RNA sequence: GGGAACGACUCGAGUAGAGUCGAAAAGCACAGAGCGAGAUGGGGCGUAAUGGAAUGCUUGAAGGCUGCUCCGUGAUGUCGGUCGGAGCUUCCAGACUAGGCGAGGGCAGGGUGAGGCCUCGGGCACCACGAUACCGAACUUCGGUUCGGUAUCGUGAAAAGAAACAACAACAACAAC
Reactivity to DMS in 0.01 (KOAc 150mM, MgCl2 10mM, bicine 150mM(pH8.5), 24C), signal-to-noise 2, nucleotides 027 to 126: g020c040a080c060a100g000a130g020c030g010a060g000a080u000g010g000g020g000c080g000u000a090a110u020g000g010a070a060u010g010c030u000u020g010a110a100g000g020c070u010g000c010u000c020c070g010u000g000a080u010g000u000c100g020g000u000c030g000g010a050g020c040u010u000c020c020a100g010a090c100u000a080g000g020c070g020a090g000g000g040c050a100g000g010g010u000g010a110g000g000c040c040u000c050g030g000g010c090a080c150
Reactivity to 2A3 in 0.01 (KOAc 150mM, MgCl2 10mM, bicine 150mM(pH8.5), 24C), signal-to-noise 2, nucleotides 027 to 126: g050c040a030c020a040g050a030g040c050g030a030g040a110u080g000g000g030g000c050g020u030a050a020u060g050g030a080a060u160g050c010u030u040g050a150a010g000g030c020u020g010c020u000c040c020g020u050g040a140u120g090u140c070g020g030u010c030g000g050a010g030c000u050u030c000c010a040g010a060c030u070a040g000g120c020g040a090g020g010g010c040a030g020g000g000u090g070a050g030g000c040c000u040c000g000g010g000c030a040c070